[RMDB]
This 177-nucleotide RNA was probed chemically with DMS.
DMS adducts were read by reverse transcription with MarathonRT.
RNA sequence: GGGAACGACUCGAGUAGAGUCGAAAAGAUAUGGAUUCAAGAGUCACUGCCAAACGCGAUAAGAUCCCAUCGGAAACGAUGGAAGAUCUUUUGACGCGUUGUGGCAGUGACUCUUGAAUCCUAAGUCGAACAGCUAUCUGUUCGCAGAUAGCUGUUCAAAAGAAACAACAACAACAAC
Reactivity to DMS in 0.01 (KOAc 150mM, MgCl2 10mM, bicine 150mM(pH8.5), 24C), signal-to-noise 1, nucleotides 027 to 126: g000a150u000a300u020g000g000a010u000u000c000a000a000g000a050g010u020c000a010c010u020g010c000c010a040a020a010c000g050c000g000a150u010a010a020g000a030u000c000c010c000a000u000c000g010g000a150a090a280c010g010a010u010g010g010a100a070g020a020u010c000u000u000u010u030g020a170c040g000c000g000u000u000g010u010g020g040c000a000g000u000g000a000c000u000c000u000u010g000a000a000u000c020c000u000a000a040g010u000c130